[RMDB]
RNA sequence: GGGAACGACUCGAGUAGAGUCGAAAAGGAAUCCCUAUAACAAUUGCCUUGCGCAAUGGGGAACGGCCGGAAUUGAAGCAUCUCAGUACGGCCAGGAAGAGAAAUCGAAUGAGACGCCGUUAGUAAUAUGUUUUUCAUCAUUCGUGAUGAAAAACAUAAAAGAAACAACAACAACAAC
Reactivity to 2A3 in 0.01 (KOAc 150mM, MgCl2 10mM, bicine 150mM(pH8.5), 24C), signal-to-noise 4, nucleotides 027 to 126: g110g020a110a060u050c020c020c010u070a080u040a150a040c050a040a020u020u030g000c000c010u170u290g080c140g000c080a010a050u080g020g000g000g000a030a110c040g000g000c000c000g000g020a090a030u020u050g030a070a020g030c100a150u070c040u010c040a010g020u020a000c020g000g000c000c000a010g010g040a040a050g050a010g010a120a070a040u110c080g060a090a060u160g020a040g010a040c030g030c030c010g040u050u100a070g050u070a040a100u030
Reactivity to DMS in 0.01 (KOAc 150mM, MgCl2 10mM, bicine 150mM(pH8.5), 24C), signal-to-noise 3, nucleotides 027 to 126: g010g010a180a090u010c000c000c010u000a120u030a140a090c200a110a060u010u000g010c000c000u010u040g010c110g020c020a070a000u010g000g010g000g020a120a090c170g020g020c000c010g000g000a100a050u030u010g000a060a110g010c150a120u000c060u000c020a010g020u000a030c000g000g000c010c010a080g000g000a110a050g020a090g000a040a080a140u010c090g000a090a090u000g000a080g010a110c120g010c040c180g000u000u000a090g000u010a060a090u000